[RMDB]
RNA sequence: GGGAACGACUCGAGUAGAGUCGAAAAAUUACUAUCAUUCAUUCCGCCCACCUUAGAACCAGAAUAUGAGCACACCUUAUCAUUGACUUGGACAUAUUUACACUCGGUGCCUGGAACAAUACACGUUGCAACACACACCUUUGAAGUUAAUUGGAUACCAUACAUGAUCUUUCGAGAUCAUGUAUGGAAAAGAAACAACAACAACAAC
Reactivity to DMS in 0.01 (KOAc 150mM, MgCl2 10mM, bicine 150mM(pH8.5), 24C), signal-to-noise 2, nucleotides 027 to 156: a070u000u000a110c060u000a090u010c050a090u010u040c050a190u000u010c060c020g040c020c000c000a100c050c040u000u000a090g050a120a100c040c040a080g010a100a100u000a040u010g020a090g000c060a080c050a050c010c070u000u000a100u020c080a100u000u010g010a070c060u010u010g030g030a130c030a090u000a070u010u000u000a120c060a090c060u000c040g050g030u000g020c020c010u000g000g000a100a060c050a040a080u000a070c110a060c110g000u000u000g000c020a090a170c090a070c060a050c000a060c010c020u000u010u000g020a050a140g020u000u000a060a120u020u010g010g010a140u000a150
Reactivity to 2A3 in 0.01 (KOAc 150mM, MgCl2 10mM, bicine 150mM(pH8.5), 24C), signal-to-noise 4, nucleotides 027 to 156: a000u150u110a050c040u090a080u110c030a130u120u090c020a030u080u030c030c020g020c000c010c030a040c020c020u060u080a050g010a100a040c010c010a030g050a130a070u170a060u170g060a040g030c030a010c010a020c060c050u040u110a070u120c040a070u020u170g060a060c010u020u060g040g010a000c010a040u130a110u070u100u090a030c070a030c050u060c080g050g000u030g040c010c020u020g030g030a010a050c040a080a040u100a070c040a020c090g030u030u030g020c010a000a080c020a000c000a000c000a020c060c000u120u050u100g060a050a020g020u080u100a060a080u110u070g050g020a020u120a170

An RNA of 207 nucleotides, treated with DMS and 2A3 and read out base by base. The reactions ran in a buffer of 150 mM KOAc, 10 mM MgCl2 and 150 mM bicine (pH 8.5), at 24 C. The 2A3 profile rests on 2,692 reads. The DMS profile rests on 3,684 reads. Values are in units of 0.01, from 0 to 300, in steps of 10.